The record gives the reactivity of an RNA of 177 nucleotides to 2A3 and DMS. For 2A3 the reverse transcriptase was SuperScript II with manganese. The 2A3 profile rests on 2,814 reads. For DMS, 3,308 sequencing reads were counted.

[RMDB]
RNA sequence: GGGAACGACUCGAGUAGAGUCGAAAACCUCCUCCGGAGAGAGAAGACCAUAGCGAUAGGGGGAGAUGCUAGGAGUAGGAGGCGACCGAAGCGAGGGGGAAAGUAAAGAAAGCAACGGGGCUAGCGACUUCUAACUAAAGUUCGCUUUAGUUAGAAGAAAAGAAACAACAACAACAAC
Reactivity to 2A3 in 0.01 (KOAc 150mM, MgCl2 10mM, bicine 150mM(pH8.5), 24C), signal-to-noise 2, nucleotides 027 to 126: c000c010u000c010c010u000c000c020g110g000a050g000a010g010a000g000a100a010g030a030c000c030a120u100a020g050c040g090a070u080a130g020g010g010g020g000a030g000a010u060g030c030u040a030g000g040a060g040u050a020g010g050a010g000g040c010g000a030c000c030g030a040a020g040c020g030a040g010g000g010g000g030a040a030a030g030u100a020a030a040g030a020a080a000g040c000a030a000c010g000g010g020g010c020u010a000g020c010g000a030
Reactivity to DMS in 0.01 (KOAc 150mM, MgCl2 10mM, bicine 150mM(pH8.5), 24C), signal-to-noise 4, nucleotides 027 to 126: c030c000u000c030c020u010c010c030g030g010a110g000a090g010a130g010a080a060g010a120c050c040a090u000a060g000c050g000a100u010a090g020g000g000g000g020a060g010a040u010g000c050u010a060g010g000a090g030u000a070g010g010a060g000g010c070g030a080c070c080g010a100a100g010c060g000a060g010g010g010g010g010a050a040a060g010u000a040a060a060g010a070a060a140g010c080a030a090c130g010g000g010g020c070u000a050g010c090g010a150